RNA sequence: GGGAACGACUCGAGUAGAGUCGAAAACAGUAUGCCUUCGGGCAUACUGAAACCAGAGGGUAUCUGGCCCACGCUCCCAUGCGUGCCGGGAAUCCCAUCCCAAAACGGAUGUCUUCGGACAUCCGAACGUACCACAAGUCUUCGGACUUGUGGUACGAAAAGAAACAACAACAACAAC
Reactivity to 2A3 in 0.01 (KOAc 150mM, MgCl2 10mM, bicine 150mM(pH8.5), 24C), signal-to-noise 2, nucleotides 027 to 126: c000a000g000u000a000u000g000c000c000u060u090c270g100g000g000c000a000u000a000c000u000g010a060a010a000c040c000a020g080a110g120g050g000u090a060u100c000u010g010g000c030c100c000a000c000g000c010u220c040c080c060a050u210g020c020g000u010g050c000c030g060g000g000a020a070u070c000c010c010a030u050c010c000c000a050a100a000a020c010g010g000a000u000g010u000c000u040u070c210g090g000a010c000a000u030c000c010g000a010a010
Reactivity to DMS in 0.01 (KOAc 150mM, MgCl2 10mM, bicine 150mM(pH8.5), 24C), signal-to-noise 2, nucleotides 027 to 126: c000a020g000u000a000u000g000c000c000u000u020c160g030g000g000c000a000u020a000c000u000g000a020a060a100c030c070a050g000a090g000g020g020u000a090u000c010u000g000g000c300c120c050a100c020g000c000u010c140c100c130a070u000g000c020g000u000g010c220c100g000g000g000a090a110u020c010c000c010a110u000c000c020c000a040a060a080a200c010g000g000a000u000g000u000c000u000u020c190g060g020a040c000a000u000c000c000g000a000a010
This 177-nucleotide RNA was probed chemically with 2A3 and DMS. In probing experiments dimethyl sulfate is read out at A N1 and C N3, which are open when not base-paired. For 2A3 the reverse transcriptase was SuperScript II with manganese. The DMS profile rests on 1,308 reads. For DMS the reverse transcriptase was MarathonRT.